[RMDB]
RNA sequence: GGGAACGACUCGAGUAGAGUCGAAAAGAAGAGAAGUGAGUAAACGCCUAUGCGGUAUAAGCACAGCCCGUCAAAAGGCGUGCGGCGAGGGCACCCGAUGCUGUGCUUAUAACUGGGCCCUCGAAGAAUCCCAGCAUAUAUUCGUAUAUGCUGGGAUAAAAGAAACAACAACAACAAC
Reactivity to DMS in 0.01 (KOAc 150mM, MgCl2 10mM, bicine 150mM(pH8.5), 24C), signal-to-noise 6, nucleotides 027 to 126: g010a100a080g010a100g030a120a100g010u010g000a100g000u020a060a090a050c060g000c010c030u010a090u050g010c040g000g000u020a050u010a040a040g000c000a010c010a020g000c010c100c030g010u020c290a040a060a120a070g000g010c060g010u010g000c100g010g020c040g000a030g000g000g020c030a060c040c020c070g010a100u020g000c000u000g000u000g000c010u000u000a030u020a050a090c090u020g000g010g000c020c030c010u000c010g000a130a100g000a150
Reactivity to 2A3 in 0.01 (KOAc 150mM, MgCl2 10mM, bicine 150mM(pH8.5), 24C), signal-to-noise 7, nucleotides 027 to 126: g100a030a020g100a010g020a140a040g090u110g090a010g020u140a060a190a020c020g010c000c010u150a170u300g030c040g020g010u050a060u030a070a000g000c000a000c000a000g000c000c010c030g070u060c070a140a130a040a010g030g000c040g000u010g000c010g070g050c040g020a060g010g040g000c040a120c030c020c030g030a020u060g010c010u010g000u000g000c000u040u040a130u040a060a040c050u030g000g010g000c000c000c000u020c010g020a040a020g040a050
Source: RMDB library OK1LIB, as collected in RNAgym.
Chemical mapping of a 177-nucleotide RNA with DMS and 2A3.
The DMS profile rests on 16,094 reads.
Reactivities are given for positions 27 through 126.
The reactions ran in a buffer of 150 mM KOAc, 10 mM MgCl2 and 150 mM bicine (pH 8.5), at 24 C.